[RMDB]
RNA sequence: GGGAACGACUCGAGUAGAGUCGAAAAUGUAGGGUACACUAUGCUGGCCUGCCCACUCCAAGUUGAGAGUUGGGCCAUGGGAUUUGGGCGAAGGCUCAGAUCUCCUGGUCACUAGAAUGGAGGGAUCGUUGGAGAUUUAGUUCGCUAAAUCUCCAACAAAAGAAACAACAACAACAAC
Reactivity to 2A3 in 0.01 (KOAc 150mM, MgCl2 10mM, bicine 150mM(pH8.5), 24C), signal-to-noise 2, nucleotides 027 to 126: u140g030u060a040g060g000g050u230a150c030a020c100u170a130u300g000c130u020g080g040c010c020u030g020c030c000c000a050c010u000c000c000a140a110g030u020u200g190a160g020a040g110u180u150g030g000g000c000c030a020u010g020g040g000a010u000u000u000g020g020g020c020g060a110a000g180g000c050u000c020a000g000a000u040c000u040c000c020u030g010g030u010c020a020c030u010a020g050a120a030u050g010g020a000g030g020g120a100u160c120
Reactivity to DMS in 0.01 (KOAc 150mM, MgCl2 10mM, bicine 150mM(pH8.5), 24C), signal-to-noise 2, nucleotides 027 to 126: u010g020u010a130g010g000g020u000a070c120a070c040u000a090u010g010c200u000g020g000c010c000u000g000c020c010c000a120c010u000c010c000a070a150g000u030u000g020a120g020a050g000u010u010g010g010g020c000c090a000u010g010g000g000a030u010u000u000g000g010g010c000g000a210a120g000g020c000u000c000a000g000a000u010c000u000c010c050u000g000g000u000c010a090c010u000a050g000a120a150u000g000g010a050g000g020g020a070u020c160